[RMDB]
RNA sequence: GGGAACGACUCGAGUAGAGUCGAAAAUCUGGUUGAUGAUAUUCAUCAUCAUCGUGAGAUUUCGAGACAAGAUCGAGGUCUGCAAGCGGCACCUCUACGUAAUCUGCAGCACGCUGCCGUGCAUCGAAUGCAGGGAACACGCGUUAGAAGCGAUCGCACACGUUUAGAGUUUCGACUCUAAACGUGUAAAAGAAACAACAACAACAAC
Reactivity to DMS in 0.01 (KOAc 150mM, MgCl2 10mM, bicine 150mM(pH8.5), 24C), signal-to-noise 2, nucleotides 027 to 156: u000c040u010g000g070u000u000g020a000u010g020a030u000a190u000u000c250a060u000c020a010u010c000a020u000c010g040u000g000a030g020a020u000u000u020c010g050a300g010a160c100a120a180g000a230u000c010g030a060g010g010u000c020u000g000c030a060a120g020c020g000g050c090a040c020c010u010c000u010a010c020g000u000a090a140u000c060u000g050c040a120g040c020a050c010g060c080u010g040c120c010g000u020g110c010a140u000c070g010a120a300u010g030c020a000g050g000g020a080a130c090a100c120g020c020g020u010u020a060g010a140a080g000c000g040a090u000c040g050c100
Reactivity to 2A3 in 0.01 (KOAc 150mM, MgCl2 10mM, bicine 150mM(pH8.5), 24C), signal-to-noise 4, nucleotides 027 to 156: u010c020u040g080g000u020u050g000a010u000g020a060u100a300u220u260c060a000u020c000a010u000c000a010u000c040g080u130g100a030g000a000u040u020u060c070g020a040g030a050c080a130a050g020a150u020c020g000a000g000g080u020c030u020g040c060a120a040g010c010g040g000c020a040c020c030u030c020u030a010c010g050u050a030a060u030c000u040g020c020a010g000c010a010c070g110c110u160g180c140c030g050u040g000c000a080u110c080g140a150a020u090g000c000a000g030g000g050a110a020c130a000c150g010c020g040u070u070a010g000a080a000g030c010g050a080u060c020g000c020
This 207-nucleotide RNA was probed chemically with DMS and 2A3.
DMS adducts were read by reverse transcription with MarathonRT.
Values are in units of 0.01, from 0 to 300, in steps of 10.
For 2A3 the reverse transcriptase was SuperScript II with manganese.
For 2A3, 2,025 sequencing reads were counted.